[RMDB]
RNA sequence: GGGAACGACUCGAGUAGAGUCGAAAAAAUGCAAAAACACUUACUGAGCUUCUACAGUGAAUCAGAUAGUAUGUUAUGAACAUAGGAUUCAUAAUUCCUGCCUCCAUGGAGUACUUUCUAGUGGGGAAAAAUAUGUAAGCAGAUAAGCACAAAUAACGUGUGCAAAGAUAUUCGUAUCUUUGCACACAAAAGAAACAACAACAACAAC
Reactivity to DMS in 0.01 (KOAc 150mM, MgCl2 10mM, bicine 150mM(pH8.5), 24C), signal-to-noise 2, nucleotides 027 to 156: a120a060u000g020c090a050a080a090a090a090c100a050c030u000u000a050c050u000g000a090g060c080u010u000c020u000a060c010a130g030u000g000a010a050u000c040a140g030a120u000a110g020u000a040u000g010u000u000a100u010g000a060a060c020a110u010a090g030g000a120u000u000c050a060u000a040a060u000u000c010c000u020g020c060c030u000c020c030a040u000g020g000a080g030u000a060c100u000u010u000c030u000a060g000u000g020g030g000g010a040a040a030a050a070u000a060u010g000u000a010a050g030c020a080g030a080u000a030a070g040c030a030c040a030a050a110u010a120a120c200
Reactivity to 2A3 in 0.01 (KOAc 150mM, MgCl2 10mM, bicine 150mM(pH8.5), 24C), signal-to-noise 4, nucleotides 027 to 156: a020a020u170g020c030a060a040a020a050a000c030a020c010u080u100a030c010u040g030a030g070c040u090u070c050u130a120c080a100g030u040g120a020a030u060c020a010g030a080u040a040g090u060a050u110g040u030u040a090u130g060a030a010c020a060u140a100g080g010a070u020u030c010a010u050a090a050u060u050c000c010u030g060c000c010u010c000c010a040u040g000g040a030g030u060a160c060u020u210u040c010u040a060g050u080g020g020g020g050a000a050a000a000a040u110a020u050g020u020a000a030g000c010a010g030a100u110a060a020g000c060a020c070a060a030a050u090a100a040c090
An RNA of 207 nucleotides, treated with DMS and 2A3 and read out base by base. In probing experiments dimethyl sulfate is read out at A N1 and C N3, which are open when not base-paired. For 2A3 the reverse transcriptase was SuperScript II with manganese. The reactions ran in a buffer of 150 mM KOAc, 10 mM MgCl2 and 150 mM bicine (pH 8.5), at 24 C. For DMS the reverse transcriptase was MarathonRT.